[RMDB]
RNA sequence: GGGAACGACUCGAGUAGAGUCGAAAAUACGGGAUACCACUUCCCUUGAGAAGUUAAUGGGUCGUUAGCUCAGUGGUAGAGCAGUUGGCUUUUAACCAAUUGGUCAUAGGUUCAAAUCCUAUACGAAGCUCGAUACUAUCUUCGGAUAGUAUCGAGCAAAAGAAACAACAACAACAAC
Reactivity to DMS in 0.01 (KOAc 150mM, MgCl2 10mM, bicine 150mM(pH8.5), 24C), signal-to-noise 2, nucleotides 027 to 126: u000a080c300g000g000g030a130u010a040c010c050a050c080u010u000c010c000c060u000u000g000a140g030a130a070g020u020u000a080a090u020g000g000g000u010c020g040u000u010a120g000c000u000c000a100g010u010g100g030u000a060g000a050g010c010a010g000u000u000g000g000c040u000u010u010u010a060a130c040c010a010a050u000u000g010g090u000c130a060u000a000g000g000u000u000c230a060a300a130u000c000c010u010a050u010a100c110g000a080a190
Reactivity to 2A3 in 0.01 (KOAc 150mM, MgCl2 10mM, bicine 150mM(pH8.5), 24C), signal-to-noise 1, nucleotides 027 to 126: u170a040c050g010g020g070a050u120a170c010c000a020c000u020u020c010c010c000u050u090g160a130g010a130a060g050u140u300a070a040u260g160g000g020u110c090g050u060u060a020g000c000u000c070a010g000u000g010g000u060a060g000a020g040c000a010g010u020u020g020g020c000u240u270u080u110a050a040c000c070a030a030u010u050g050g000u060c030a000u020a010g050g000u010u010c010a010a040a080u040c020c000u000a010u010a050c050g070a080a060